[RMDB]
RNA sequence: GGGAACGACUCGAGUAGAGUCGAAAAAAGGUUACUGACGUCAGCCAAACUCCGAAUGCCAGAGUGUGAGAGCGCGGCAGUGAGACUGCGGGGGAUAAGCUUCGUAGUCGAGAGGGAAACAGCCCAGUUCCCUUCUUUCUUUCGAGAAAGAAGGGAAAAAAGAAACAACAACAACAAC
Reactivity to 2A3 in 0.01 (KOAc 150mM, MgCl2 10mM, bicine 150mM(pH8.5), 24C), signal-to-noise 3, nucleotides 027 to 126: a010a000g110g010u080u040a010c020u030g000a000c010g040u110c080a010g020c010c010a020a020a030c020u010c010c010g140a190a070u180g040c010c050a010g010a010g060u050g010u060g090a140g010a010g030c010g000c000g000g000c010a000g010u020g040a060g000a010c000u000g000c000g000g000g000g000g060a140u110a210a100g090c010u020u010c010g020u010a000g000u010c000g010a030g010a020g000g020g040a050a080a010c020a040g030c000c000c000a040g000
Reactivity to DMS in 0.01 (KOAc 150mM, MgCl2 10mM, bicine 150mM(pH8.5), 24C), signal-to-noise 6, nucleotides 027 to 126: a100a050g010g010u000u010a040c010u000g010a050c030g000u020c080a180g010c020c040a060a140a060c020u000c000c040g000a170a100u050g000c120c070a080g010a060g010u000g000u010g010a130g010a120g020c030g000c090g000g000c020a020g000u010g010a150g000a030c010u000g010c010g000g010g000g000g020a180u020a070a140g010c000u000u000c020g000u000a010g000u000c010g000a070g020a130g000g000g000a110a050a040c040a040g000c010c000c010a220g010
The record gives the reactivity of an RNA of 177 nucleotides to 2A3 and DMS. Conditions: 150 mM KOAc, 10 mM MgCl2 and 150 mM bicine (pH 8.5), 24 C. The data come from the RNA Mapping Database (RMDB), libraries RFM100 and RFMREP. For 2A3, 2,291 sequencing reads were counted.